Annotation:
This 177-nucleotide RNA was probed chemically with DMS and 2A3. The DMS profile rests on 2,837 reads. It was measured as part of the RMDB library OK2TST. The reactions ran in a buffer of 150 mM KOAc, 10 mM MgCl2 and 150 mM bicine (pH 8.5), at 24 C.
RNA sequence: GGGAACGACUCGAGUAGAGUCGAAAAAAACCUUGGUCGAGCGGGCAACAGGCGGCAAAGGUGGUGGCGGCGCUUUUCUGACUCGCUAUGGUGAGCGUUUAAUCCAGCUCUAUGAUUUGCUGGCGCAACUGCGACAUUUAUUCGUAAAUGUCGCAGUAAAAGAAACAACAACAACAAC
Reactivity to DMS in 0.01 (KOAc 150mM, MgCl2 10mM, bicine 150mM(pH8.5), 24C), signal-to-noise 3, nucleotides 027 to 126: a090a090a080c040c020u000u000g010g010u010c020g010a070g020c070g020g020g000c090a070a080c110a080g010g020c040g010g010c050a040a070a090g010g000u010g000g020u010g010g010c070g000g010c080g000c050u010u010u000u010c010u010g020a050c010u010c040g010c050u010a070u000g010g010u000g000a050g010c010g020u000u000u000a080a130u010c020c010a040g010c010u000c120u010a080u010g010a130u010u000u000g010c010u000g010g020c300g010c170a060
Reactivity to 2A3 in 0.01 (KOAc 150mM, MgCl2 10mM, bicine 150mM(pH8.5), 24C), signal-to-noise 1, nucleotides 027 to 126: a000a010a000c020c000u050u080g010g000u060c000g040a040g030c060g000g010g030c010a060a010c030a160g050g020c000g000g000c020a080a020a010g020g000u030g040g010u030g000g000c040g020g050c030g000c000u050u020u050u000c040u050g050a040c000u000c030g000c040u050a100u170g120g010u130g020a030g000c000g000u000u060u070a040a040u040c000c000a020g010c000u020c020u120a230u130g140a190u140u070u220g000c010u020g020g020c060g000c050a050